[RMDB]
RNA sequence: GGGAACGACUCGAGUAGAGUCGAAAAAGAGUUCGCUUCGGCGAACUCUACAACGGGAAAACGGCCUCCCGGAAAGAUAAGGCGGAUUCCGUCCAAGGGCCGAGAGUGGUGCGUUCGCGCACCACAAAUCACAUGAAUUGUUCGCAAUUCAUGUGAUAAAAGAAACAACAACAACAAC
Reactivity to 2A3 in 0.01 (KOAc 150mM, MgCl2 10mM, bicine 150mM(pH8.5), 24C), signal-to-noise 3, nucleotides 027 to 126: a000g000a010g000u000u000c000g000c020u030u090c170g040g000c000g000a010a000c000u010c000u010a000c010a040a010c000g000g010g010a000a060a000a080c000g000g000c000c000u020c000c000c020g020g030a090a070a010g090a040u140a100a060g010g030c070g030g050a260u300u110c040c000g020u010c040c040a030a030g080g010g000c000c010g000a010g010a000g000u020g000g010u010g010c030g010u020u040c230g000c000g000c090a000c010c000a000c000a000a000
Reactivity to DMS in 0.01 (KOAc 150mM, MgCl2 10mM, bicine 150mM(pH8.5), 24C), signal-to-noise 4, nucleotides 027 to 126: a030g010a050g020u000u000c000g030c000u010u010c190g030g010c000g000a000a000c010u000c000u000a020c100a060a090c000g000g000g010a030a040a060a180c010g010g000c010c010u000c000c000c000g010g010a040a090a300g000a070u010a040a060g000g000c020g010g000a280u000u010c030c010g010u000c010c080a130a100g000g000g020c010c000g010a160g010a180g020u000g000g030u000g000c000g030u000u020c200g010c010g010c000a000c000c000a010c000a010a060
This 177-nucleotide RNA was probed chemically with 2A3 and DMS. For 2A3 the reverse transcriptase was SuperScript II with manganese. The reactions ran in a buffer of 150 mM KOAc, 10 mM MgCl2 and 150 mM bicine (pH 8.5), at 24 C. Reactivities are given for positions 27 through 126. It was measured as part of the RMDB library M2PK50.